An RNA of 177 nucleotides, treated with DMS and 2A3 and read out base by base. The RNA was probed in 150 mM KOAc, 10 mM MgCl2 and 150 mM bicine (pH 8.5) at 24 C.

[RMDB]
RNA sequence: GGGAACGACUCGAGUAGAGUCGAAAAAGAUGACGUACGCGUCAUCAAUUAAGACUUGCAGUGAUGUUUAACUCCUCUCCACGUGAACAUCACAGCAAGUCUGUGCUAGAGUGGUUACGACCACUCAUUGUCCAGAGGACUUCGGUCCUCUGGACAAAAAAGAAACAACAACAACAAC
Reactivity to DMS in 0.01 (KOAc 150mM, MgCl2 10mM, bicine 150mM(pH8.5), 24C), signal-to-noise 2, nucleotides 027 to 126: a170g000a000u000g010a010c010g000u020a080c170g000c030g000u000c010a010u000c000a020a090u030u010a060a040g000a000c000u000u000g010c000a130g030u000g010a010u000g020u010u010u090a030a080c050u040c060c050u000c110u020c060c040a190c200g020u020g010a010a020c000a000u000c000a000c000a030g000c000a010a010g000u000c000u000g020u010g010c100u020a060g000a020g020u010g000g000u010u020a160c130g020a090c010c010a020c010u020c000a050
Reactivity to 2A3 in 0.01 (KOAc 150mM, MgCl2 10mM, bicine 150mM(pH8.5), 24C), signal-to-noise 2, nucleotides 027 to 126: a020g000a000u010g000a000c000g020u080a010c300g000c010g130u000c020a000u000c000a000a010u150u070a010a000g000a000c000u000u000g000c010a050g010u000g000a000u010g020u050u000u070a260a160c010u070c020c060u190c010u070c050c070a090c080g070u040g010a030a020c000a000u000c020a000c000a000g000c010a000a000g000u000c000u000g010u020g030c060u100a140g000a000g000u000g030g000u070u040a100c260g040a000c070c000a000c000u000c000a040

The 2A3 profile rests on 1,229 reads.
DMS adducts were read by reverse transcription with MarathonRT.
Reactivities are rounded to 0.1 and cut off at 0 and 3.
It was measured as part of the RMDB library RFM100.